An RNA of 177 nucleotides, treated with DMS and 2A3 and read out base by base. DMS adducts were read by reverse transcription with MarathonRT. As a SHAPE reagent, 2A3 marks flexible, mostly unpaired nucleotides at the ribose 2'-OH. The reactions ran in a buffer of 150 mM KOAc, 10 mM MgCl2 and 150 mM bicine (pH 8.5), at 24 C.
RNA sequence: GGGAACGACUCGAGUAGAGUCGAAAAACUCAAAAAGGGACAGCCGUACGCAGAAAUCGAGGUGAUGAAGAUGUACAUGCAACUGCCUGUGCAUGAGGGCGGAAUCAUCUCCCAUGUUCUGUCUGAGUACCAGUUAUGAUUUCGAUCAUAACUGGUAAAAAGAAACAACAACAACAAC
Reactivity to DMS in 0.01 (KOAc 150mM, MgCl2 10mM, bicine 150mM(pH8.5), 24C), signal-to-noise 8, nucleotides 027 to 126: a080c030u010c020a050a060a060a110a090g010g010g010a070c070a060g020c090c080g010u010a080c180g020c020a030g000a030a060a040u000c170g010a080g010g010u000g010a020u000g000a180a090g000a110u010g010u000a080c010a030u000g010c020a110a090c150u010g010c070c050u000g010u000g000c020a010u010g010a100g010g000g010c030g010g000a230a050u000c010a010u000c030u000c010c050c110a110u010g000u000u000c010u000g010u000c070u000g010a140g020
Reactivity to 2A3 in 0.01 (KOAc 150mM, MgCl2 10mM, bicine 150mM(pH8.5), 24C), signal-to-noise 6, nucleotides 027 to 126: a010c060u060c020a120a100a030a050a040g120g010g050a110c040a040g100c030c050g050u040a030c080g000c020a010g040a070a070a010u140c080g020a050g020g020u030g000a020u020g020a020a030g030a040u040g020u050a010c010a010u020g000c030a140a180c160u170g060c040c050u090g010u020g010c010a010u020g030a110g100g150g020c030g010g030a010a010u030c010a000u000c010u030c010c020c010a060u170g090u040u020c020u030g080u010c040u070g030a020g060